[RMDB]
RNA sequence: GGGAACGACUCGAGUAGAGUCGAAAAAAUCAUCGCACAUAGGCAAACUUUCGGAAUCCAUAUCCAUAUCACCUAAAGCAUCGGCGAGCGUCAUUUCCUGAUUGGCAACCUUGAUGCAAUAUUCACGAUUAAGCCCAGCAUCUUGAGCGGUUAAGAAGGAUGGGCAUCCAUUCGUGGAUGCCCAUCCAAAAGAAACAACAACAACAAC
Reactivity to 2A3 in 0.01 (KOAc 150mM, MgCl2 10mM, bicine 150mM(pH8.5), 24C), signal-to-noise 1, nucleotides 027 to 156: a000a000u040c040a040u120c000g030c030a090c000a110u080a090g000g020c030a000a180a230c070u100u080u100c000g010g030a040a030u030c020c000a010u010a030u150c050c030a000u000a060u290c190a080c020c070u070a110a080a110g000c000a060u060c020g010g040c020g020a010g020c000g000u040c060a070u000u000u080c000c000u050g100a110u030u130g080g000c000a040a040c020c040u120u220g000a030u010g000c020a020a000u100a040u200u110c050a010c120g080a060u070u000a020a010g000c000c030c050a000g000c030a090u050c050u080u060g040a020g030c050g070g040u040u040a000a000g070a140a000